An RNA of 177 nucleotides, treated with DMS and 2A3 and read out base by base. Conditions: 150 mM KOAc, 10 mM MgCl2 and 150 mM bicine (pH 8.5), 24 C. DMS adducts were read by reverse transcription with MarathonRT.

RNA sequence: GGGAACGACUCGAGUAGAGUCGAAAAUCUGAAAAGAUACGGUCUUCUUCUCCUUUUUCAAGUACCAAUUGGACAAAAGGCAUGCUGUAUUUUUCAAUUACCUUUACUGUUUUCUUGUCCAUUAAGCAUAACAAGCCUUAUUCGUAAGGCUUGUUAUAAAAGAAACAACAACAACAAC
Reactivity to DMS in 0.01 (KOAc 150mM, MgCl2 10mM, bicine 150mM(pH8.5), 24C), signal-to-noise 7, nucleotides 027 to 126: u010c030u000g000a110a090a110a040g010a030u000a100c110g020g010u000c060u010u000c050u010u010c040u010c010c030u000u000u010u000u010c070a060a090g010u010a130c060c050a100a100u000u000g000g000a030c040a030a030a040a030g000g010c120a020u000g020c160u010g010u000a010u000u010u010u020u020c150a080a050u010u000a040c040c210u000u010u000a130c140u000g000u000u000u000u000c150u000u000g010u000c020c020a070u000u010a050a110g010c170
Reactivity to 2A3 in 0.01 (KOAc 150mM, MgCl2 10mM, bicine 150mM(pH8.5), 24C), signal-to-noise 3, nucleotides 027 to 126: u020c000u030g040a040a020a020a000g020a010u080a100c100g070g020u030c020u080u010c010u050u010c010u110c020c000u030u100u030u040u160c060a060a020g020u020a050c010c010a060a120u080u030g010g000a010c010a010a040a000a000g010g010c000a000u060g020c000u050g020u110a070u040u120u010u070u100c040a050a080u080u020a050c020c000u080u130u110a100c070u040g030u040u020u020u000c100u030u000g000u000c010c000a020u020u140a060a040g060c070